[RMDB]
RNA sequence: GGGAACGACUCGAGUAGAGUCGAAAAACUGAUCCAUGGUACGUACGACAUGCGCUAGUCAUGCAGCACAUGCUAGCGCUAGAGACUAUAUGAUAGGUACUACAUGCUCUAGUAGGAUCCACAUGUCGCGACAACUAUGGUUCGCCAUAGUUGUCGCAAAAGAAACAACAACAACAAC
Reactivity to DMS in 0.01 (KOAc 150mM, MgCl2 10mM, bicine 150mM(pH8.5), 24C), signal-to-noise 2, nucleotides 027 to 126: a100c050u040g050a070u000c100c030a030u000g020g000u000a040c110g000u000a130c070g000a100c200a050u000g000c000g020c010u000a000g030u010c030a000u020g000c130a190g010c300a300c010a000u020g000c000u000a000g000c000g010c000u000a030g000a070g000a170c070u000a170u300a100u010g000a040u010a040g000g040u000a070c000u010a000c050a050u000g010c130u000c020u000a030g100u000a080g000g000a120u010c070c020a130c180a070u010g010u000c010
Reactivity to 2A3 in 0.01 (KOAc 150mM, MgCl2 10mM, bicine 150mM(pH8.5), 24C), signal-to-noise 2, nucleotides 027 to 126: a000c010u030g040a010u090c000c000a010u030g080g060u120a060c110g060u030a010c040g040a040c080a110u040g000c000g000c020u000a010g010u300c030a030u000g090c120a070g040c040a040c000a110u000g030c000u000a000g000c000g020c010u000a000g010a010g040a040c030u080a020u000a050u300g130a100u070a080g030g010u040a040c020u030a070c020a040u070g040c030u000c000u030a030g020u040a080g190g020a060u030c030c000a090c000a110u260g060u170c090
An RNA of 177 nucleotides, treated with DMS and 2A3 and read out base by base. Reactivities are given for positions 27 through 126. The DMS profile rests on 782 reads. For 2A3, 1,208 sequencing reads were counted.